An RNA of 207 nucleotides, treated with 2A3 and read out base by base. The RNA was probed in 150 mM KOAc, 10 mM MgCl2 and 150 mM bicine (pH 8.5) at 24 C.
RNA sequence: GGGAACGACUCGAGUAGAGUCGAAAAGCGUCUGCUCAACAUAAACGUGUUUCAGAUCAACGGCGUCGCCGCCAAUGGCGGGGGCAAUGUAGACGUGAAUCGUGUCGAUUGCGCCGCGGUUCUGCUCCAAGCACUAAUCAAAGACAACAAUAGAGCCCCCUUACAAGUCAUUCGUGACUUGUAAGGGAAAAGAAACAACAACAACAAC
Reactivity to 2A3 in 0.01 (KOAc 150mM, MgCl2 10mM, bicine 150mM(pH8.5), 24C), signal-to-noise 3, nucleotides 027 to 156: g000c000g010u020c000u010g000c000u020c060a080a100c060a120u210a150a150a030c050g020u040g030u010u170u050c110a090g040a160u040c060a100a020c000g030g010c010g040u030c010g060c040c000g000c030c050a170a150u300g000g010c000g000g000g010g000g010c000a010a020u090g020u030a010g000a040c060g020u040g050a020a000u080c030g000u010g030u030c020g130a210u080u250g090c020g040c030c000g030c000g000g000u000u020c010u010g010c040u050c020c010a100a020g060c010a010c080u100a090a050u080c050a110a210a020g060a070c060a100a030c010a020a200u130a080g050a010g070c020c000
The 2A3 profile rests on 1,065 reads. Source: RMDB library OK3TST, as collected in RNAgym. Values cover nucleotides 27 to 156.